The record gives the reactivity of an RNA of 177 nucleotides to 2A3 and DMS.
The RNA was probed in 150 mM KOAc, 10 mM MgCl2 and 150 mM bicine (pH 8.5) at 24 C.
RNA sequence: GGGAACGACUCGAGUAGAGUCGAAAAUGGAUGGGCGUUGUUGUGUCUCGAUCAACCGUGGCAUGCUCUUGGGACGAACCGCCCUUCUUUGGUCUGAAAAGAGCGUUCAUCUGCCUAUUCUAAAAUAGAUAUGGGUCCAGUUCGCUGGACCCAUAUCAAAAGAAACAACAACAACAAC
Reactivity to 2A3 in 0.01 (KOAc 150mM, MgCl2 10mM, bicine 150mM(pH8.5), 24C), signal-to-noise 2, nucleotides 027 to 126: u250g050g020a030u040g020g000g000c000g020u040u000g030u070u100g060u090g000u070c020u000c010g030a050u160c010a000a070c070c020g040u040g010g000c070a070u120g010c000u000c020u050u070g020g020g000a010c000g010a020a030c000c000g010c000c000c000u000u010c000u010u010u100g060g000u000c030u090g050a060a060a050a060g020a010g000c000g000u050u010c010a110u000c040u070g060c010c010u000a090u170u090c070u050a060a070a110a080u240a090
Reactivity to DMS in 0.01 (KOAc 150mM, MgCl2 10mM, bicine 150mM(pH8.5), 24C), signal-to-noise 1, nucleotides 027 to 126: u040g010g010a030u000g000g000g020c000g000u010u000g010u010u020g020u000g000u000c000u000c000g000a140u020c090a180a040c240c050g000u000g000g010c030a050u020g030c010u000c040u020u000g000g000g000a050c020g000a000a060c120c090g000c050c000c010u000u030c050u000u010u000g000g000u000c010u010g000a100a000a020a080g000a020g000c000g000u000u020c060a020u000c090u040g010c000c000u000a070u000u010c040u010a020a030a150a230u050a050
Record summary
For 2A3, 787 sequencing reads were counted. The DMS profile rests on 1,899 reads.